[RMDB]
RNA sequence: GGGAACGACUCGAGUAGAGUCGAAAAGCCGGAGGACGGCGGUUCAAGUCCUGCAAGGAUGUUCAUGAGCACAGUUUUACCCGAGCCAUUUGCACCUGCGAGGACGACACAGUCCCCAGGAAACACCCCUAGGACGAUCAUUCGUGAUCGUCCUAGGAAAAGAAACAACAACAACAAC
Reactivity to 2A3 in 0.01 (KOAc 150mM, MgCl2 10mM, bicine 150mM(pH8.5), 24C), signal-to-noise 4, nucleotides 027 to 126: g020c010c000g000g010a130g040g040a010c000g010g050c040g010g020u040u020c130a110a000g010u000c030c010u050g010c060a100a140g010g010a180u010g010u070u110c060a020u060g000a020g040c020a030c040a120g020u070u060u170u150a050c020c020c000g020a030g000c030c020a060u030u030u140g030c030a020c000c000u030g030c050g070a120g020g000a000c020g080a010c050a010c000a090g000u000c020c000c030c000a020g010g100a000a040a020c030a050c000c030
Reactivity to DMS in 0.01 (KOAc 150mM, MgCl2 10mM, bicine 150mM(pH8.5), 24C), signal-to-noise 2, nucleotides 027 to 126: g020c000c000g010g010a060g050g030a030c010g020g010c050g010g000u010u050c160a130a120g010u000c020c000u010g010c070a010a150g000g000a070u010g000u000u010c050a020u000g010a140g010c000a030c090a090g060u000u010u050u020a090c140c030c040g000a160g000c050c090a060u020u000u010g000c040a060c000c010u000g010c120g040a040g000g000a000c000g000a080c140a150c100a180g010u040c000c020c000c040a020g000g000a050a040a080c110a100c120c020